[RMDB]
RNA sequence: GGGAACGACUCGAGUAGAGUCGAAAACGCGCCCAACAUGCGAAGCCGCUGGGCAGCCCAAUCUCACAGUCCCAGGCCGGACACAGGAGUUGCGUUCGUGACUUGCACAAACGCAGUUUCAAGUCACGGAGUCGAGGGGUUUCGACCCCUCGACUCCAAAAGAAACAACAACAACAAC
Reactivity to 2A3 in 0.01 (KOAc 150mM, MgCl2 10mM, bicine 150mM(pH8.5), 24C), signal-to-noise 1, nucleotides 027 to 126: c000g040c000g000c000c020c030a110a010c110a160u160g040c020g080a120a020g030c030c040g040c030u110g010g040g000c020a040g020c000c010c020a060a180u050c000u040c010a080c020a060g050u000c000c030c000a020g010g120c020c010g010g030a030c010a000c000a060g020g000a000g020u010u060g060c000g030u040u090c040g030u000g010a110c040u080u180g020c050a000c030a070a080a000c060g020c050a070g000u010u030u030c000a000a000g030u000c000a000c060
Annotation:
Structure probing data (2A3) for a 177-nucleotide construct. The RNA was probed in 150 mM KOAc, 10 mM MgCl2 and 150 mM bicine (pH 8.5) at 24 C. The 2A3 profile rests on 605 reads.